[RMDB]
RNA sequence: GGGAACGACUCGAGUAGAGUCGAAAAUUACCUCUUUCGGUCAUACGCUUCUCGCUUCCGCCAUUUGCAGCUAUCAGGAGCUAUUGGCUGAUCAAAUCAGCGAUAUUGUCUUUGGUUCCAUUGUGGACAUCCCGCUAUCCUUCGGGAUAGCGGGAUGAAAAGAAACAACAACAACAAC
Reactivity to 2A3 in 0.01 (KOAc 150mM, MgCl2 10mM, bicine 150mM(pH8.5), 24C), signal-to-noise 1, nucleotides 027 to 126: u070u030a070c000c010u000c080u000u050u100c050g010g000u020c010a020u040a070c040g020c020u050u050c010u000c020g020c020u100u020c030c060g030c130c010a190u150u030u190g080c050a070g040c010u040a040u170c050a040g020g050a030g040c000u000a070u020u060g060g000c020u010g000a040u030c070a020a130a030u060c000a000g050c020g070a020u000a030u190u160g060u010c010u060u070u060g000g010u040u000c050c020a090u080u230g050u140g040g010a000
Reactivity to DMS in 0.01 (KOAc 150mM, MgCl2 10mM, bicine 150mM(pH8.5), 24C), signal-to-noise 1, nucleotides 027 to 126: u000u000a200c030c010u000c090u020u010u000c040g000g030u010c070a090u000a080c080g010c040u000u000c060u010c050g000c110u010u000c050c030g020c020c130a100u020u040u000g010c120a040g010c080u000a090u020c120a040g020g030a070g040c040u000a060u000u010g000g030c000u000g000a030u000c200a020a070a300u000c020a030g020c070g040a040u020a020u000u000g000u000c060u000u000u000g020g000u000u010c020c000a140u000u010g030u000g020g030a160

An RNA of 177 nucleotides, treated with 2A3 and DMS and read out base by base. High 2A3 reactivity points to a flexible backbone, as in loops and unpaired stretches. Conditions: 150 mM KOAc, 10 mM MgCl2 and 150 mM bicine (pH 8.5), 24 C. The data come from the RNA Mapping Database (RMDB), library OK2TST. 2A3 adducts were read by reverse transcription with SuperScript II with manganese. Reactivities are given for positions 27 through 126. For DMS, 934 sequencing reads were counted.